RNA sequence: GGGAACGACUCGAGUAGAGUCGAAAAUGGAGAGAGAUGUGUUGAAGAUGCAAGAGAGAAGUGAAGUGGUCCCACGGAACGGUUGUAGACCCAGGAGCAGUGGUGUGGUGGAUUUAAAUAGCCACAAGGUAAAUUAGUUCAGCCAUUGUGGAAGACACGACGUACAUAUGUUCGCAUAUGUACGUCGAAAAGAAACAACAACAACAAC
Reactivity to 2A3 in 0.01 (KOAc 150mM, MgCl2 10mM, bicine 150mM(pH8.5), 24C), signal-to-noise 2, nucleotides 027 to 156: u130g010g010a020g000a010g000a010g010a120u050g080u030g040u110u090g010a070a020g030a050u120g010c030a040a000g030a010g000a030g000a020a170g020u060g040a070a030g000u010g060g030u010c030c040c010a030c050g000g010a110a010c030g000g010u040u020g020u030a030g020a040c090c000c000a040g050g010a010g000c030a000g070u070g040g000u020g000u000g060g000u020g020g010a000u000u050u100a080a160a050u090a000g000c030c000a000c000a030a000g020g000u040a050a060a190u190u150a060g040u130u140c010a020g000c000c010a080u000u050g000u000g040g010a030a010g040a010c050a000
Reactivity to DMS in 0.01 (KOAc 150mM, MgCl2 10mM, bicine 150mM(pH8.5), 24C), signal-to-noise 1, nucleotides 027 to 156: u000g000g030a080g000a060g000a110g000a090u000g010u010g040u000u030g030a070a060g020a050u000g020c010a050a120g030a110g010a080g000a120a120g050u000g000a050a120g050u040g010g000u010c050c020c060a020c080g000g000a020a190c030g030g010u030u010g000u020a110g000a040c030c010c040a130g020g030a140g000c020a060g040u000g010g010u010g030u000g010g020u000g020g020a160u000u000u000a030a070a140u000a190g000c000c010a000c000a030a050g000g030u000a030a050a180u000u000a040g000u000u010c090a190g020c040c010a120u010u010g000u010g000g000a050a060g020a160c060a170

This 207-nucleotide RNA was probed chemically with 2A3 and DMS.
High DMS reactivity at an A or C suggests that its Watson-Crick edge is free.
It was measured as part of the RMDB library OK3TST.
2A3 adducts were read by reverse transcription with SuperScript II with manganese.